[RMDB]
Notes
This 177-nucleotide RNA was probed chemically with DMS. Source: RMDB library OK2TST, as collected in RNAgym. For DMS the reverse transcriptase was MarathonRT.
RNA sequence: GGGAACGACUCGAGUAGAGUCGAAAACUCUUAUAAUAAGUAUAAGUACUUUUCAGGCACUGCUUCUGAUAAGGAUUAUGACAAAGUUUGUAUGGCCUUCUUGGCUAAAGCUUUGUCAUCCUUUAGAUAUUAGGCUACAAUUCGUUGUAGCCUAAUAAAAAGAAACAACAACAACAAC
Reactivity to DMS in 0.01 (KOAc 150mM, MgCl2 10mM, bicine 150mM(pH8.5), 24C), signal-to-noise 3, nucleotides 027 to 126: c040u010c000u010u000a040u000a070a250u020a120a150g000u000a070u000a050a070g000u000a110c090u000u010u000u000c060a060g020g000c070a090c080u000g020c050u000u000c070u000g000a090u010a000a020g000g000a190u010u010a050u000g010a020c000a000a010a000g000u000u000u000g030u010a160u010g010g010c010c000u000u010c290u010u000g030g010c000u000a060a030a030g000c000u000u000u000g010u000c000a000u000c010c000u000u000u000a080g010a220
The RNA was probed in 150 mM KOAc, 10 mM MgCl2 and 150 mM bicine (pH 8.5) at 24 C.
Values are in units of 0.01, from 0 to 300, in steps of 10.